[RMDB]
RNA sequence: GGGAACGACUCGAGUAGAGUCGAAAACAUCUUUCCUCACUACACAGUGACUCCAGCUUGGGAGGGGCAGGGCUAGGCUGAGCCAGCACUCCCUGUGGUGUCUGCCUGCCACGUGCAGCUCUGGAGUAAAACCUGGAGAAGUUCGCUUCUCCAGGAACAUAGGUGUCCUGUUCGCAGGACACCUAUGAAAAGAAACAACAACAACAAC
Reactivity to DMS in 0.01 (KOAc 150mM, MgCl2 10mM, bicine 150mM(pH8.5), 24C), signal-to-noise 1, nucleotides 027 to 156: c030a060u000c050u010u000u000c010c000u030c020a130c060u000a150c060a130c050a170g030u000g000a170c000u000c030c010a040g010c170u000u000g000g010g000a060g020g000g060g050c030a090g040g040g030c050u020a050g010g030c070u010g000a200g010c000c000a090g020c000a000c000u000c010c020c010u020g000u000g020g000u000g010u000c020u000g000c090c040u030g000c030c000a050c070g000u010g000c060a060g010c020u000c000u010g020g000a070g020u000a060a080a050a250c020c000u010g010g000a030g010a040a000g010u000u000c300g050c030u000u000c000u000c000c000a010g000g010a000a040
Reactivity to 2A3 in 0.01 (KOAc 150mM, MgCl2 10mM, bicine 150mM(pH8.5), 24C), signal-to-noise 3, nucleotides 027 to 156: c060a100u120c070u060u070u020c010c000u060c030a040c030u140a060c120a030c040a060g030u040g070a020c000u020c000c010a040g020c040u140u090g020g030g000a010g020g020g130g000c050a150g060g030g000c010u120a070g100g040c040u050g070a030g050c010c030a000g030c010a000c020u010c030c010c000u020g000u030g020g000u030g060u010c020u030g070c000c010u030g020c040c020a110c100g110u140g010c030a010g000c010u030c010u050g000g010a000g020u050a010a050a000a020c000c000u000g000g000a000g010a020a000g000u010u240c210g050c130u000u000c000u000c020c000a000g000g000a000a000